[RMDB]
RNA sequence: GGGAACGACUCGAGUAGAGUCGAAAAUUCGUAUGCAAUGGCUGCCUAAUUAGCAAAAGUUAAUUAACCAGCCAUCGCUCUUCAGCGGAGGCGCUUACUCCAAGGCUGUUAGAGUGGCAUAAUUCGCGCUUGAGCUCUGCUCGCGCAAGUAAGCUCCGAAGGAAGUAGUGUUCGCACUACUUCCUUCAAAAGAAACAACAACAACAAC
Reactivity to 2A3 in 0.01 (KOAc 150mM, MgCl2 10mM, bicine 150mM(pH8.5), 24C), signal-to-noise 3, nucleotides 027 to 156: u100u050c050g050u080a030u090g030c050a050a070u010g010g000c000u000g000c010c020u030a010a010u010u000a010g000c010a040a150a240a250g010u020u010a010a000u000u010a020a020c020c000a000g010c000c000a020u040c010g000c000u030c000u010u010c000a000g000c000g000g020a000g000g000c020g010c060u000u010a010c010u000c010c010a010a030g040g000c010u020g070u170u030a010g010a000g010u030g070g000c000a010u070a070a140u220u160c100g000c020g020c060u100u180g050a010g020c070u050c140u300g020c000u000c070g000c000g000c010a000a000g030u010a020a010g000c020u060c070c080
Reactivity to DMS in 0.01 (KOAc 150mM, MgCl2 10mM, bicine 150mM(pH8.5), 24C), signal-to-noise 2, nucleotides 027 to 156: u010u000c060g020u000a070u000g000c040a130a070u000g020g010c010u000g000c170c020u010a010a020u000u000a030g050c030a050a110a120a230g010u000u010a010a040u010u000a010a080c070c000a010g000c010c000a000u010c080g010c020u020c030u000u000c020a050g000c010g000g000a300g090g000c040g000c010u000u010a020c000u000c000c020a020a300g030g000c000u000g000u010u000a020g010a030g010u000g050g030c080a080u010a070a160u000u000c050g010c030g000c020u000u000g000a020g010c000u000c130u020g000c030u010c050g010c040g000c030a030a030g000u000a020a040g000c000u010c050c090
This 207-nucleotide RNA was probed chemically with 2A3 and DMS. For DMS, 3,822 sequencing reads were counted. Values are in units of 0.01, from 0 to 300, in steps of 10. Source: RMDB library ARCHII, as collected in RNAgym. Conditions: 150 mM KOAc, 10 mM MgCl2 and 150 mM bicine (pH 8.5), 24 C.